[RMDB]
RNA sequence: GGGAACGACUCGAGUAGAGUCGAAAAGCAAAGAAAUUUUAUCCCAAUAAGGCGAAGCGUGCAAGUGGAAUAAAGCUAAUGCUGCUAGCGAGCACGCGAGCCCUAGCAGACUCCUAGCGAGAAAAAAGUUAAUGCAAAUGUUCGCAUUUGCAUUAACAAAAGAAACAACAACAACAAC
Reactivity to 2A3 in 0.01 (KOAc 150mM, MgCl2 10mM, bicine 150mM(pH8.5), 24C), signal-to-noise 3, nucleotides 027 to 126: g060c020a060a040a070g130a050a240a020u070u150u090u060a080u050c000c020c000a000a060u100a030a010g010g000c010g090a050a000g020c010g000u020g000c010a050a020g030u030g090g110a150a120u150a170a110a000g010c030u070a160a050u300g060c040u020g000c000u030a020g050c010g010a010g000c010a010c030g010c000g000a000g000c000c000c000u000a000g010c020a000g050a140c010u000c020c030u090a070g030c070g050a010g000a080a110a010a000a000a010
Reactivity to DMS in 0.01 (KOAc 150mM, MgCl2 10mM, bicine 150mM(pH8.5), 24C), signal-to-noise 3, nucleotides 027 to 126: g000c100a070a030a080g020a050a040a160u010u000u000u010a080u000c000c010c000a140a130u000a080a100g000g020c000g000a090a180g020c000g050u000g020c000a080a190g010u000g010g000a180a140u010a030a070a040g010c010u010a060a100u020g020c140u010g010c050u010a050g010c020g030a300g010c010a010c020g010c020g000a210g000c000c000c040u000a070g020c090a080g000a110c030u000c020c040u000a070g000c080g000a060g020a020a050a060a080a070a130

An RNA of 177 nucleotides, treated with 2A3 and DMS and read out base by base. The DMS profile rests on 2,378 reads. For 2A3, 3,870 sequencing reads were counted.